[RMDB]
RNA sequence: GGGAACGACUCGAGUAGAGUCGAAAAACGAUAACGAGGCGCUCGCUAUUGCUGCGUAACUGACGGCCUGACGGACUGACGUUACAAAGCUAAAGCGCGGUUGGACCCCACCGGGCAACAGAAGGGGAAAGGCGACCCCGUUUCGACGGGGUCGCAAGUAUCAUUCAUUGUUCGCAAUGAAUGAUACAAAAGAAACAACAACAACAAC
Reactivity to DMS in 0.01 (KOAc 150mM, MgCl2 10mM, bicine 150mM(pH8.5), 24C), signal-to-noise 1, nucleotides 027 to 156: a080c040g010a180u000a070a100c010g030a110g000g020c000g040c000u010c000g020c040u000a160u020u020g000c070u020g030c300g010u000a080a070c040u040g000a300c120g000g000c000c000u000g020a200c280g010g010a040c020u010g020a190c110g000u000u000a030c020a050a300a040g020c000u020a020a120a210g010c010g050c000g000g000u010u000g010g010a090c000c000c000c020a110c030c060g000g000g010c060a080a180c110a020g000a120a060g010g010g020g000a050a020a110g020g000c010g020a110c040c000c000c010g060u000u000u000c260g010a050c000g000g020g000g060u010c000g000c010a010a020
Reactivity to 2A3 in 0.01 (KOAc 150mM, MgCl2 10mM, bicine 150mM(pH8.5), 24C), signal-to-noise 2, nucleotides 027 to 156: a000c030g020a060u140a070a040c060g000a040g060g040c030g010c090u050c050g010c040u100a100u150u260g000c020u000g000c010g000u000a000a000c000u050g030a040c030g030g000c030c010u160g130a060c150g020g000a030c000u020g000a020c020g000u000u000a000c000a010a000a020g000c000u010a040a050a000g000c000g010c010g000g000u040u090g150g050a020c010c030c000c000a000c000c000g080g110g000c010a010a010c010a010g030a010a010g000g010g010g000a080a060a020g050g010c000g030a000c010c000c010c000g020u020u050u100c140g050a000c000g000g010g000g000u000c000g010c000a000a000
The record gives the reactivity of an RNA of 207 nucleotides to DMS and 2A3. DMS (dimethyl sulfate) methylates the pairing face of unpaired adenines and cytosines. For 2A3 the reverse transcriptase was SuperScript II with manganese. It was measured as part of the RMDB library M2RFPK.